The record gives the reactivity of an RNA of 177 nucleotides to 2A3 and DMS.

RNA sequence: GGGAACGACUCGAGUAGAGUCGAAAAGAUAUGGAACCAUGAGAGCAACAGCUACUUGUCGGAAACGACAAGGUAGACAUGCUCGAGUGGUUCCUAAGUCAAACUCGAGCAGUUCGCUGCUCGAGAACGUACGUAGGAUGUUCGCAUCCUACGUACGAAAAGAAACAACAACAACAAC
Reactivity to 2A3 in 0.01 (KOAc 150mM, MgCl2 10mM, bicine 150mM(pH8.5), 24C), signal-to-noise 5, nucleotides 027 to 126: g010a010u040a030u100g000g000a000a000c010c010a030u090g020a030g000a000g070c090a040a140c060a250g050c010u010a000c010u010u000g000u000c010g010g010a050a030a030c010g010a000c000a010a000g110g020u030a000g010a050c100a240u300g010c010u000c000g000a010g000u000g000g000u000u000c010c000u000a000a000g000u000c000a010a040a150c000u000c000g000a000g000c000a000g000u120u250c300g070c160u000g000c000u010c010g010a000g000a000a010
Reactivity to DMS in 0.01 (KOAc 150mM, MgCl2 10mM, bicine 150mM(pH8.5), 24C), signal-to-noise 5, nucleotides 027 to 126: g000a030u000a300u000g010g000a030a010c010c000a010u000g000a300g010a030g020c000a060a090c300a160g020c000u000a040c000u000u000g000u000c000g010g010a140a090a100c010g000a030c000a000a020g000g020u000a040g000a020c110a300u010g010c000u000c010g000a300g000u000g010g000u000u000c000c000u000a020a070g010u000c020a090a090a210c020u010c010g000a010g010c020a010g020u000u020c280g020c010u000g000c000u000c000g000a010g000a040a070

The 2A3 profile rests on 16,062 reads. Values cover nucleotides 27 to 126. The data come from the RNA Mapping Database (RMDB), library TTRDES. The RNA was probed in 150 mM KOAc, 10 mM MgCl2 and 150 mM bicine (pH 8.5) at 24 C. 2A3 adducts were read by reverse transcription with SuperScript II with manganese.